[RMDB]
RNA sequence: GGGAACGACUCGAGUAGAGUCGAAAAGUGUCGGCGUAGAAGGUCUGCUCCUUGACGGCGUUCAAGCUGGCCGAUACGUGGUCGAUGCCGUCGGCGUCCAGUAACCGCCCGGAGUAGUCGCGCAGCAACGGGAACUAUGUUUCGACAUAGUUCCCGUAAAAGAAACAACAACAACAAC
Reactivity to 2A3 in 0.01 (KOAc 150mM, MgCl2 10mM, bicine 150mM(pH8.5), 24C), signal-to-noise 2, nucleotides 027 to 126: g070u050g060u090c050g070g000c020g020u070a050g070a230a030g140g030u000c020u010g030c010u050c010c000u040u080g080a050c060g030g040c040g030u040u140c090a100a040g040c020u020g010g000c010c000g020a020u020a090c060g040u050g000g020u080c190g120a140u290g030c020c020g010u040c000g000g000c020g010u040c020c030a020g030u070a050a040c000c020g020c000c030c010g000g000a000g000u010a010g010u020c020g000c000g000c070a020g080c020a040
Reactivity to DMS in 0.01 (KOAc 150mM, MgCl2 10mM, bicine 150mM(pH8.5), 24C), signal-to-noise 4, nucleotides 027 to 126: g010u010g000u000c020g010g010c030g010u000a080g020a130a120g020g010u000c030u000g000c020u000c020c020u000u000g010a060c070g020g010c060g000u010u010c210a100a130g000c040u000g000g000c010c000g000a060u000a050c100g020u010g010g020u000c130g000a110u010g010c000c000g010u000c020g000g020c020g000u020c020c020a080g010u010a090a120c130c020g010c010c020c300g000g000a020g010u000a030g020u000c040g010c030g030c060a160g000c110a120

An RNA of 177 nucleotides, treated with 2A3 and DMS and read out base by base. The data come from the RNA Mapping Database (RMDB), library OK2TST. 2A3 adducts were read by reverse transcription with SuperScript II with manganese. For DMS, 3,703 sequencing reads were counted. Values are in units of 0.01, from 0 to 300, in steps of 10. Reactivities are given for positions 27 through 126. The reactions ran in a buffer of 150 mM KOAc, 10 mM MgCl2 and 150 mM bicine (pH 8.5), at 24 C.